Source: RMDB library OK2TRN, as collected in RNAgym.
The record gives the reactivity of an RNA of 177 nucleotides to 2A3 and DMS.
For DMS, 3,072 sequencing reads were counted.
[RMDB]
RNA sequence: GGGAACGACUCGAGUAGAGUCGAAAAGUUUUUCUGGCUGCACCUUCGCCGCCGAGACAGGUAUUGCUCUUUAUUCACUGCACGAUCUAUGGCCCGCUGACGUCGCUGAGGCGAUGGCCCGUCAUGGCCACGGAUAUCUGUUCGCAGAUAUCCGUGGAAAAGAAACAACAACAACAAC
Reactivity to 2A3 in 0.01 (KOAc 150mM, MgCl2 10mM, bicine 150mM(pH8.5), 24C), signal-to-noise 1, nucleotides 027 to 126: g020u060u060u070u080u110c050u060g020g000c040u030g000c080a060c040c030u090u120c040g030c040c010g000c000c000g010a000g000a020c030a010g110g010u070a100u080u130g010c020u000c000u100u180u030a180u120u090c070a040c090u040g020c020a030c080g060a050u020c030u130a070u090g060g000c050c000c000g000c050u020g050a020c020g050u050c030g000c040u060g040a030g140g000c020g030a020u020g060g050c000c000c000g010u030c020a080u110g110g000
Reactivity to DMS in 0.01 (KOAc 150mM, MgCl2 10mM, bicine 150mM(pH8.5), 24C), signal-to-noise 3, nucleotides 027 to 126: g010u000u000u000u010u010c030u010g000g030c020u000g040c100a120c100c080u000u010c070g020c030c060g020c020c020g010a080g010a070c110a060g010g010u000a060u010u010g010c050u000c030u000u010u000a090u020u000c100a050c040u000g010c080a080c070g010a050u000c040u000a080u010g010g010c010c010c070g010c050u010g000a030c030g010u000c050g020c030u000g000a160g040g000c030g010a060u000g000g010c030c020c020g030u000c070a050u000g000g010